[RMDB]
RNA sequence: GGGAACGACUCGAGUAGAGUCGAAAAGAUGACCGGUUCGCCGGUCAUCAAAUAGGGAAACGGCGUCCGCGGCACCGUCCGCGGAACAAACGGAAAAUAAAAAAACGCUAACCUUCGGGUUAGCGAACCUCUUGUAGAUGUUCGCAUCUACAAGAGGAAAAGAAACAACAACAACAAC
Reactivity to DMS in 0.01 (KOAc 150mM, MgCl2 10mM, bicine 150mM(pH8.5), 24C), signal-to-noise 2, nucleotides 027 to 126: g010a010u010g000a000c000c000g050g000u010u010c270g010c000c010g020g040u000c020a000u000c010a000a040a040u000a190g000g040g000a070a090a130c130g030g030c110g020u010c010c000g010c000g000g010c030a230c160c130g000u010c000c010g030c010g000g030a010a090c090a020a050a090c070g000g000a100a110a090a090u010a010a030a080a080a040a060a140c030g000c000u000a000a010c000c000u000u000c210g010g000g000u000u000a000g020c010g000a030a010
Reactivity to 2A3 in 0.01 (KOAc 150mM, MgCl2 10mM, bicine 150mM(pH8.5), 24C), signal-to-noise 2, nucleotides 027 to 126: g000a010u010g000a030c000c010g000g050u040u040c150g030c060c010g000g000u000c000a000u000c000a000a000a000u110a010g020g010g070a210a010a000c010g090g000c040g020u000c000c000g000c020g000g020c090a120c210c090g070u060c000c010g000c010g000g040a000a000c010a000a070a000c040g110g030a060a060a110a010u240a050a140a050a020a020a000a030c000g000c010u000a000a000c000c010u010u030c180g030g000g000u020u000a000g000c010g000a000a000